[RMDB]
RNA sequence: GGGAACGACUCGAGUAGAGUCGAAAACGCUGCGAGCGAGGAGUAAGACCAUAGCGAUGGAAAGAGAUGCUAGGAGUAGGGAGAGACCGAAGCGAGGAGGAAAGCAAAGAAAGCAACGGGGCUAGCCAGAGCAGCCAGUUCGCUGGCUGCAAAAGAAACAACAACAACAAC
Reactivity to 2A3 in 0.01 (KOAc 150mM, MgCl2 10mM, bicine 150mM(pH8.5), 24C), signal-to-noise 3, nucleotides 027 to 129: c030g010c040u080g000c050g050a030g020c020g020a040g010g000a040g020u130a080a030g040a010c020c030a070u090a050g070c070g070a080u080g010g080a060a050a010g050a010g000a010u110g030c050u060a030g000g010a030g020u090a050g030g030g000a040g010a030g020a010c020c030g000a040a010g020c020g040a000g000g000a000g010g040a030a000a010g050c080a010a080a000g050a060a060a010g010c060a020a050c040g030g000g010g000c010u000a020g010c010c030a030g020a010
Reactivity to DMS in 0.01 (KOAc 150mM, MgCl2 10mM, bicine 150mM(pH8.5), 24C), signal-to-noise 2, nucleotides 027 to 129: c130g040c080u020g060c060g010a050g010c000g020a000g030g000a050g060u030a080a080g000a070c050c040a100u020a000g040c100g040a020u060g030g010a090a120a060g020a030g040a100u030g030c130u040a030g010g050a050g060u000a170g040g030g000a000g000a100g020a040c040c000g030a140a070g050c160g030a070g040g000a070g000g000a030a010a100g020c140a030a030a090g070a030a080a000g020c070a040a080c070g010g000g010g010c040u010a090g000c060c080a080g030a080